[RMDB]
RNA sequence: GGGAACGACUCGAGUAGAGUCGAAAACUCUGAAGGCAUGAUCACCCCGUCCGAUGCGGAAGUUCGUGCUUCCGUAGAACGCGAAAGUCGGACGGCGGCCAUGAGUCGCAACGCAAAGCCGCGGCAAUAAGCUCGUCGUCGUUCGCGACGACGAGAAGGAAUCAGUAGUGUUCGCACUACUGAUUCCAAAAGAAACAACAACAACAAC
Reactivity to 2A3 in 0.01 (KOAc 150mM, MgCl2 10mM, bicine 150mM(pH8.5), 24C), signal-to-noise 3, nucleotides 027 to 156: c090u060c060u110g100a140a010g050g040c010a020u050g010a040u100c040a030c000c010c010c010g010u000c010c000g020a000u020g020c000g000g010a020a000g030u170u300c180g180u300g100c000u000u000c000c000g000u000a010g010a080a040c050g010c040g180a160a040a000g010u030c020g000g010a000c000g000g000c020g010g020c020c000a020u050g030a020g020u020c000g010c020a070a120c040g000c250a270a020a000g030c050c030g000c030g000g010c020a020a110u160a130a010g010c010u000c000g000u000c010g010u010c000g000u020u060c170g010c010g100a000c000g000a000c000g000a000g010a010a010
Description:
An RNA of 207 nucleotides, treated with 2A3 and read out base by base. Source: RMDB library M2RFPK, as collected in RNAgym. For 2A3 the reverse transcriptase was SuperScript II with manganese.